RNA sequence: GGGAACGACUCGAGUAGAGUCGAAAAGGGUGAGACCUAGGAACCGUAGGGGUAUUCUCAAAGGAAGCUUUUGCAGUGACGCCCAUGUAAGUGGGAUAUAACAACAGAACUCGUAUCAGUAGCCUAAUAAAUCGGACCUUCUUCGGAAGGUCCGAAAGAUCUAUUGACUGUUCGCAGUCAAUAGAUCAAAAGAAACAACAACAACAAC
Reactivity to DMS in 0.01 (KOAc 150mM, MgCl2 10mM, bicine 150mM(pH8.5), 24C), signal-to-noise 1, nucleotides 027 to 156: g010g030g020u010g020a120g040a080c040c030u020a120g020g000a050a030c080c050g000u010a050g030g020g000g030u010a060u000u000c040u000c030a090a130a110g010g040a150a070g010c030u000u000u000u030g030c050a070g010u000g000a100c050g000c000c020c010a050u020g030u000a070a140g030u010g000g010g000a050u000a070u000a120a140c030a090a100c080a090g010a040a060c030u000c050g000u010a070u010c050a050g050u000a100g020c050c010u000a060a060u000a010a070a150u030c010g030g000a030c010c020u000u030c020u010u010c220g060g030a070a010g010g010u000c000c010g000a010a010a090
Reactivity to 2A3 in 0.01 (KOAc 150mM, MgCl2 10mM, bicine 150mM(pH8.5), 24C), signal-to-noise 3, nucleotides 027 to 156: g060g000g020u080g040a060g020a060c020c030u060a060g070g040a060a080c050c030g030u040a020g040g000g010g010u040a080u140u030c060u020c040a060a050a030g070g040a090a030g010c040u000u050u090u090g010c050a010g010u010g100a010c070g020c000c010c010a010u060g060u140a100a110g030u020g000g040g040a010u040a010u020a090a030c060a000a000c000a030g050a070a030c010u000c080g050u080a070u070c020a050g030u090a050g030c030c000u060a150a080u130a090a140a050u030c000g000g010a000c010c000u000u000c000u010u020c040g090g010a000a000g020g000u010c000c000g010a000a000a000